[RMDB]
RNA sequence: GGGAACGACUCGAGUAGAGUCGAAAAACCUGUCUUGCCCUGUUCCAAGAUGGUGGCAGAGCUUCUCUGAGUCUCUCGCUUCCUCCAGUCCGUCGGAGAAGCGCUCUUUGAUUGGCCAGUGGACAGCGCCGUGGCAUGACGCGCUGGGGCGCUGGCACCUAUACCUGGUGUUCGCACCAGGUAUAGGAAAAGAAACAACAACAACAAC
Reactivity to 2A3 in 0.01 (KOAc 150mM, MgCl2 10mM, bicine 150mM(pH8.5), 24C), signal-to-noise 2, nucleotides 027 to 156: a000c000c000u020g030u020c020u030u050g050c040c020c020u040g050u210u040c070c010a130a070g030a070u150g010g080u050g020g070c030a040g000a030g110c030u040u070c080u000c030u110g100a040g090u040c000u000c020u000c070g010c030u020u020c040c030u000c000c010a070g070u060c070c140g070u090c060g000g000a000g000a010a010g000c000g020c000u040c010u110u060u090g130a180u020u130g080g000c000c000a000g020u080g020g070a010c000a000g000c000g020c090c070g090u030g050g090c120a140u110g050a020c020g040c010g030c070u010g000g020g100g050c000g020c000u000g050g010c010a010